[RMDB]
RNA sequence: GGGAACGACUCGAGUAGAGUCGAAAAUGCCUUGGCUGACGACGACCGUCGGCGGUGGAGGCUGGGUCAACGCCAUUGGGGGCACACACGGCAGCCUGGAGCUCCCGCACGGGUUCGGCCCGGGUCAAGUACUGAUGCAGUUCGCUGCAUCAGUACUAAAAGAAACAACAACAACAAC
Reactivity to DMS in 0.01 (KOAc 150mM, MgCl2 10mM, bicine 150mM(pH8.5), 24C), signal-to-noise 2, nucleotides 027 to 126: u000g010c000c000u000u000g010g030c000u000g000a050c020g000a080c050g020a160c290c190g010u000c000g000g020c010g060g020u010g020g010a020g000g030c010u010g010g010g010u000c030a050a070c120g010c000c000a160u020u020g020g000g000g000g000c060a090c040a140c060a100c120g000g000c090a070g000c030c110u000g000g010a110g010c010u000c010c000c000g020c180a080c180g010g000g010u000u010c220g010g000c010c010c020g000g000g010u000c100a100